[RMDB]
RNA sequence: GGGAACGACUCGAGUAGAGUCGAAAAGGUACAGGCAGGCCGGGGAUUCCCCUCUUUAACACCAGGCUCGGCACGCACAUCGCGACGGCCAAUGGUUUCGGGAACCCCAGUACAGGCAGGCUGGGACUUAUUUCACAAGUUUCGACUUGUGAAAUAAAAAAGAAACAACAACAACAAC
Reactivity to 2A3 in 0.01 (KOAc 150mM, MgCl2 10mM, bicine 150mM(pH8.5), 24C), signal-to-noise 8, nucleotides 027 to 126: g070g010u100a030c020a020g030g040c020a020g040g000c020c050g010g010g000g050a140u030u030c020c010c030c010u100c090u080u150u120a110a030c050a010c040c000a030g020g000c060u110c160g050g010c160a070c090g040c010a070c020a210u220c190g000c010g020a070c010g020g010c010c000a050a160u100g000g020u020u070u120c040g020g000g000a010a010c000c000c000c000a000g010u020a010c010a010g030g000c000a000g020g040c010u020g020g000g020a010c010
Reactivity to DMS in 0.01 (KOAc 150mM, MgCl2 10mM, bicine 150mM(pH8.5), 24C), signal-to-noise 9, nucleotides 027 to 126: g010g020u000a060c040a200g000g000c020a050g010g020c020c020g040g000g010g000a170u010u000c000c000c010c220u020c160u020u040u020a090a090c190a050c010c010a070g010g010c010u030c040g010g010c120a110c020g020c040a110c290a130u020c140g010c020g010a090c020g000g000c000c010a070a110u010g020g000u000u010u020c300g000g000g010a030a020c020c000c000c000a070g010u030a080c220a170g000g000c010a030g000g010c000u000g000g000g000a120c050